[RMDB]
RNA sequence: GGGAACGACUCGAGUAGAGUCGAAAAUGAUAUUCGGUUGAUCUAACUGACUAGCCCGGUACCAUCGCCAUUGCCGUGUGUGUCCGUUCAAGCAAGAUCACCAUCAAUAACCACAUAAAAAUGCAUGGAUAGAGAAAUUGAAUACCGCCGGCGCGUCCUAUAUGGGUACGUUCGCGUACCCAUAUAGAAAAGAAACAACAACAACAAC
Reactivity to DMS in 0.01 (KOAc 150mM, MgCl2 10mM, bicine 150mM(pH8.5), 24C), signal-to-noise 1, nucleotides 027 to 156: u000g060a060u010a040u000u010c080g050g000u000u000g000a050u000c020u010a110a190c150u000g000a030c020u000a260g000c030c020c020g000g010u000a020c050c010a050u010c040g020c020c060a180u010u000g000c020c000g040u000g000u000g040u000g030u000c060c100g030u010u030c080a120a130g020c080a110a100g040a110u000c050a060c020c020a090u000c030a100a090u000a060a150c020c020a060c070a040u000a000a020a090a080a090u000g010c040a060u000g000g000a130u000a060g020a100g000a090a100a160u000u010g000a080a080u000a060c010c050g010c010c000g030g050c040g050c040g000u000c010
Reactivity to 2A3 in 0.01 (KOAc 150mM, MgCl2 10mM, bicine 150mM(pH8.5), 24C), signal-to-noise 3, nucleotides 027 to 156: u140g010a030u040a080u180u170c050g010g000u060u080g020a030u020c010u050a010a070c050u020g020a010c040u020a030g010c010c000c000g000g000u030a040c050c000a090u080c070g050c080c020a060u070u100g000c000c010g020u030g010u010g010u000g010u050c040c020g010u050u060c100a090a050g030c070a080a010g050a000u030c020a000c030c020a000u040c020a010a080u110a070a040c060c020a010c020a080u240a090a110a040a080a020u110g020c050a040u050g040g110a100u110a180g090a030g020a060a060a020u130u090g010a050a050u030a120c030c020g030c040c010g030g000c010g000c010g000u020c000
Overview
Source: RMDB library OK3TST, as collected in RNAgym. An RNA of 207 nucleotides, treated with DMS and 2A3 and read out base by base. 2A3 adducts were read by reverse transcription with SuperScript II with manganese. The reactions ran in a buffer of 150 mM KOAc, 10 mM MgCl2 and 150 mM bicine (pH 8.5), at 24 C. For 2A3, 1,677 sequencing reads were counted.